[RMDB]
RNA sequence: GGGAACGACUCGAGUAGAGUCGAAAAAGCCGGUUGCCCGCGAACAGGAUUGCGGUGAGCGUGGUACCCAUGCCUUCGAGAUCGGGCUCCAUCUCGACUUGCGCUGCGAUAGCCGAGUUGCCGGCGCAAGCCGGCGGGGAUUCGUCCCCGCCGGCUUAAAAGAAACAACAACAACAAC
Reactivity to DMS in 0.01 (KOAc 150mM, MgCl2 10mM, bicine 150mM(pH8.5), 24C), signal-to-noise 1, nucleotides 027 to 126: a110g000c000c030g000g020u010u000g000c020c030c000g010c070g010a080a120c160a130g030g020a110u000u020g000c120g060g010u010g000a080g030c020g050u000g020g010u020a040c120c010c020a110u020g000c070c050u020u010c090g010a020g020a050u040c080g000g010g000c090u030c070c070a080u000c010u010c010g000a040c070u030u020g020c010g020c000u000g000c060g000a040u000a060g000c030c020g020a120g010u010u000g000c080c000g000g010c000g010c140
Reactivity to 2A3 in 0.01 (KOAc 150mM, MgCl2 10mM, bicine 150mM(pH8.5), 24C), signal-to-noise 3, nucleotides 027 to 126: a000g020c000c000g000g030u070u050g030c000c020c000g000c030g020a070a040c050a110g110g010a240u120u220g020c030g030g010u090g010a010g050c070g010u060g020g030u080a060c010c010c000a020u130g060c030c010u130u150c060g020a070g040a170u060c100g040g040g030c050u090c030c030a060u060c000u000c030g050a020c000u040u200g010c040g000c040u010g020c030g150a120u140a090g040c050c040g000a050g090u020u000g070c050c010g000g000c010g000c040
This 177-nucleotide RNA was probed chemically with DMS and 2A3. Values cover nucleotides 27 to 126. For DMS the reverse transcriptase was MarathonRT. The data come from the RNA Mapping Database (RMDB), library OK1LIB.